[RMDB]
RNA sequence: GGGAACGACUCGAGUAGAGUCGAAAAGAGUCAUCAUCGUCAUCGGUCACAGAGGGGGAAAGGACCGUGAGAGUUCUUGAUACUGUAGAAAAAUGGCUGGCUUGUGGGGUUGACAACUUCUGUGUGAGAUAGGAGUCGGUUUCGACCGACUCCUAUCAAAAGAAACAACAACAACAAC
Reactivity to DMS in 0.01 (KOAc 150mM, MgCl2 10mM, bicine 150mM(pH8.5), 24C), signal-to-noise 2, nucleotides 027 to 126: g030a080g010u000c070a070u000c110a040u010c080g030u010c020a050u000c090g000g000u000c000a020c070a080g030a070g000g030g000g030g020a070a040a040g000g010a020c030c030g000u070g000a190g000a120g000u000u000c040u000u030g000a130u030a050c060u010g020u020a060g040a010a070a090a050a060u040g000g010c050u010g020g000c090u010u020g040u000g010g000g000g000u030u020g000a070c050a060a040c040u010u000c030u020g000u030g020u000g020a130
Reactivity to 2A3 in 0.01 (KOAc 150mM, MgCl2 10mM, bicine 150mM(pH8.5), 24C), signal-to-noise 1, nucleotides 027 to 126: g070a000g070u080c000a000u000c000a010u070c020g020u040c000a150u060c050g020g020u080c000a010c010a030g020a050g040g030g040g000g020a000a000a060g080g000a030c000c000g000u070g080a120g000a000g020u110u000c020u090u080g180a140u040a120c020u030g100u180a050g030a070a040a000a000a000u070g020g000c000u010g000g000c000u000u140g020u030g000g000g000g000u090u220g000a020c000a020a030c030u060u070c120u130g110u080g000u070g120a100

Chemical mapping of a 177-nucleotide RNA with DMS and 2A3. For DMS the reverse transcriptase was MarathonRT.